This 177-nucleotide RNA was probed chemically with DMS and 2A3. It was measured as part of the RMDB library OK2TRN. Values cover nucleotides 27 to 126. For 2A3 the reverse transcriptase was SuperScript II with manganese.
[RMDB]
RNA sequence: GGGAACGACUCGAGUAGAGUCGAAAAGUCGGUUUCGCCAAGGGCUUCGUUGACCAGGCCGAGGGCGACGUUCUGCUGCACCGUCAGCCAGGGGAACAGGCGGUGCUCCUGGAACACGAUGCCGCGAAUAAUAUAGCCCAUUCGUGGGCUAUAUUAUAAAAGAAACAACAACAACAAC
Reactivity to DMS in 0.01 (KOAc 150mM, MgCl2 10mM, bicine 150mM(pH8.5), 24C), signal-to-noise 8, nucleotides 027 to 126: g020u000c050g010g010u000u000u000c020g000c020c090a150a150g010g000g010c000u000u000c080g020u000u000g010a300c030c030a040g010g020c040c080g000a140g020g010g000c010g010a080c230g000u010u010c050u010g010c020u000g000c010a020c010c000g030u000c040a100g010c040c060a130g000g010g010g020a180a140c070a090g000g000c020g010g010u000g000c000u000c010c000u010g010g000a070a100c200a060c060g000a030u000g000c010c020g010c060g000a130
Reactivity to 2A3 in 0.01 (KOAc 150mM, MgCl2 10mM, bicine 150mM(pH8.5), 24C), signal-to-noise 3, nucleotides 027 to 126: g060u060c040g040g080u010u040u060c050g000c040c030a080a110g120g000g000c020u010u010c030g070u050u080g050a040c030c010a020g020g000c030c100g150a260g000g040g000c040g020a060c080g080u120u080c060u150g000c000u020g000c010a010c010c010g010u010c010a030g040c060c030a080g060g000g000g010a060a060c020a070g040g000c010g010g010u000g010c000u000c010c000u020g010g000a010a010c000a000c030g020a010u050g000c000c000g080c010g040a010

Overview: For DMS the reverse transcriptase was MarathonRT. The DMS profile rests on 11,730 reads.